[RMDB]
RNA sequence: GGGAACGACUCGAGUAGAGUCGAAAAAUUGUUUGUAAUACAAGCCUCGGCGUAAACUGGAUCAGAAAAGCCACAUAAAGGUACUAUCUUCUUCAGCUUCGAAAUACUAGAGCUGCUAGUAGCGUGGCCUAUGCGUCGAUUUCGAUCGACGCAUAGGAAAAGAAACAACAACAACAAC
Reactivity to DMS in 0.01 (KOAc 150mM, MgCl2 10mM, bicine 150mM(pH8.5), 24C), signal-to-noise 1, nucleotides 027 to 126: a170u030u000g000u010u010u000g020u000a100a120u000a150c030a100a210g000c030c020u000c030g000g030c040g000u000a010a050a100c030u000g000g000a040u000c120a060g000a000a190a130a100g000c000c050a050c060a070u030a080a110a030g000g000u000a030c000u000a050u000c000u000u000c060u030u000c070a000g000c110u010u000c060g020a010a090a090u030a070c090u000a010g000a150g020c080u030g020c170u000a000g000u000a040g060c000g000u000g000g040
Reactivity to 2A3 in 0.01 (KOAc 150mM, MgCl2 10mM, bicine 150mM(pH8.5), 24C), signal-to-noise 2, nucleotides 027 to 126: a000u100u110g040u020u030u130g130u090a220a130u170a140c050a100a000g050c020c030u010c030g080g020c070g080u090a100a000a030c030u010g100g060a020u090c000a000g060a030a100a030a000g010c010c010a020c020a010u300a060a130a030g000g000u030a040c010u000a040u040c050u050u010c000u000u050c000a040g000c020u110u070c030g110a050a150a080u130a060c040u040a030g030a010g150c130u120g060c000u000a000g000u000a040g110c010g000u030g000g010

Conditions: 150 mM KOAc, 10 mM MgCl2 and 150 mM bicine (pH 8.5), 24 C. The record gives the reactivity of an RNA of 177 nucleotides to DMS and 2A3.